[RMDB]
RNA sequence: GGGAACGACUCGAGUAGAGUCGAAAAGAUAUGGACUCUCCACGAUUGAUCUUUGAUCUCGGAAACGAGGGAGAUUAGAGUGGAGGAGUCCUAAGUCAAAAGACUCCCUACUUCGGUAGGGAGUCAACAGUCUGUGAAACUUCGGUUUCACAGACUGAAAAGAAACAACAACAACAAC
Reactivity to DMS in 0.01 (KOAc 150mM, MgCl2 10mM, bicine 150mM(pH8.5), 24C), signal-to-noise 1, nucleotides 027 to 126: g010a020u000a300u000g000g020a000c010u000c000u010c020c000a010c010g020a290u000u000g030a010u000c020u000u010u000g000a100u000c000u000c030g030g000a030a050a140c000g050a000g000g000g010a010g000a010u000u000a030g010a270g010u000g000g000a030g000g000a020g010u000c000c000u000a010a100g000u010c030a060a040a120a070g000a020c000u000c000c010c010u000a000c000u000u020c200g030g000u010a000g010g000g000a000g000u000c000a000a090

Description
An RNA of 177 nucleotides, treated with DMS and read out base by base. Source: RMDB library TTRDEL, as collected in RNAgym. Values cover nucleotides 27 to 126.